RNA sequence: GGGAACGACUCGAGUAGAGUCGAAAAAGGCGAACAAAUGCAGGGCCCAGAAGCUUUCUUGCAGCGCCGGCGCCUUAGCAGGGCGCCAGGCUAAUGAGGGUCACUCAAAGAGGCUGAUCAAAUAUUCACCGUUACGAAUGUUCGCAUUCGUAACGGUAAAAGAAACAACAACAACAAC
Reactivity to DMS in 0.01 (KOAc 150mM, MgCl2 10mM, bicine 150mM(pH8.5), 24C), signal-to-noise 2, nucleotides 027 to 126: a030g070g010c020g040a060a090c100a070a060a070u030g020c040a080g000g020g010c010c000c030a140g010a130a050g010c040u000u010u010c060u010u000g000c100a070g000c110g000c010c000g000g020c010g000c000c000u000u000a120g020c140a210g020g000g010c000g010c000c000a020g000g020c010u000a030a120u050g000a070g000g030g040u010c090a030c050u000c040a040a090a100g010a160g000g000c020u000g000a030u020c120a070a010a070u030a100u020u040c120
Reactivity to 2A3 in 0.01 (KOAc 150mM, MgCl2 10mM, bicine 150mM(pH8.5), 24C), signal-to-noise 5, nucleotides 027 to 126: a000g060g000c020g010a070a030c060a090a120a040u170g040c060a050g000g070g040c010c020c010a010g070a130a010g040c020u100u190u080c030u080u100g040c040a030g030c010g000c030c000g000g010c000g020c020c000u020u020a030g060c100a030g030g000g000c000g000c000c010a020g010g000c020u060a050a050u090g040a070g000g000g110u100c050a080c050u050c030a060a080a020g070a060g060g000c030u030g010a030u110c040a040a080a030u140a090u150u210c030